[RMDB]
RNA sequence: GGGAACGACUCGAGUAGAGUCGAAAAACAAUUUACAAGCAGACAUUUGCUACAAGUUCGUCCUUUGGGAUUAUGAACGUAGCAAUAUUUAUGGUACUGCUACUAUUGGUGUAUGUAAGUACACUGAACAGUAAGCCCUUCGGGGCUUACAAAAGAAACAACAACAACAAC
Reactivity to DMS in 0.01 (KOAc 150mM, MgCl2 10mM, bicine 150mM(pH8.5), 24C), signal-to-noise 3, nucleotides 027 to 129: a000c060a060a160u110u000u090a070c280a160a050g060c030a060g000a100c080a120u010u010u030g020c020u030a010c050a110a130g010u040u000c000g010u020c000c030u010u100u120g010g020g040a030u020u000a060u100g020a040a090c050g070u050a050g020c130a000a100u070a000u000u000u000a000u050g040g020u000a050c040u010g000c020u040a030c080u080a110u110u010g020g080u000g020u000a000u060g020u010a110a020g030u010a040c000a010c010u060g080a050a070c170a140
Reactivity to 2A3 in 0.01 (KOAc 150mM, MgCl2 10mM, bicine 150mM(pH8.5), 24C), signal-to-noise 5, nucleotides 027 to 129: a010c010a010a030u130u240u300a070c080a070a030g010c000a020g020a060c060a090u000u000u080g000c000u010a010c000a290a200g030u000u000c000g000u020c030c000u140u170u210g260g000g000a010u070u020a080u300g030a000a000c030g000u020a010g000c000a010a000u090a060u050u120u040a080u060g040g000u110a120c000u000g060c000u040a030c010u040a060u080u110g030g000u000g010u020a020u000g090u140a080a100g030u010a020c000a020c000u000g010a010a030c000a040